[RMDB]
RNA sequence: GGGAACGACUCGAGUAGAGUCGAAAAGGAGGAUCGCGGAGCCUCCCGCGCUCGGCGUCUGCGGAGCCUGCGCAGGGAGCAGCUGCGAGGCGCGCCGCUCCCGGGCCCGCAGGGCGGUGCCGCGCUGGGCGCAAUAUCAUUUCGAUGAUAUUGCGCCAAAAGAAACAACAACAACAAC
Reactivity to DMS in 0.01 (KOAc 150mM, MgCl2 10mM, bicine 150mM(pH8.5), 24C), signal-to-noise 2, nucleotides 027 to 126: g000g000a040g020g000a050u010c050g040c080g000g020a190g020c010c020u000c010c000c040g000c030g010c000u010c070g010g050c070g010u010c050u010g000c000g020g020a290g020c020c010u000g020c110g010c130a110g000g000g000a050g000c060a040g020c010u010g050c000g000a120g000g000c090g020c080g000c000c010g010c010u010c020c020c000g010g000g000c030c060c020g010c020a050g000g000g020c080g020g010u000g000c070c050g030c010g030c100u000g030
Reactivity to 2A3 in 0.01 (KOAc 150mM, MgCl2 10mM, bicine 150mM(pH8.5), 24C), signal-to-noise 1, nucleotides 027 to 126: g040g030a040g030g040a070u150c090g000c090g220g040a000g000c020c010u000c020c000c000g010c000g000c000u010c020g120g010c100g130u070c040u090g000c010g060g000a100g020c050c050u170g060c150g010c030a070g000g040g020a040g050c040a050g020c020u120g020c010g070a100g040g100c070g030c060g010c000c010g030c000u000c010c000c010g000g000g000c000c090c040g000c030a020g010g040g020c040g030g070u040g040c070c020g000c000g000c030u090g070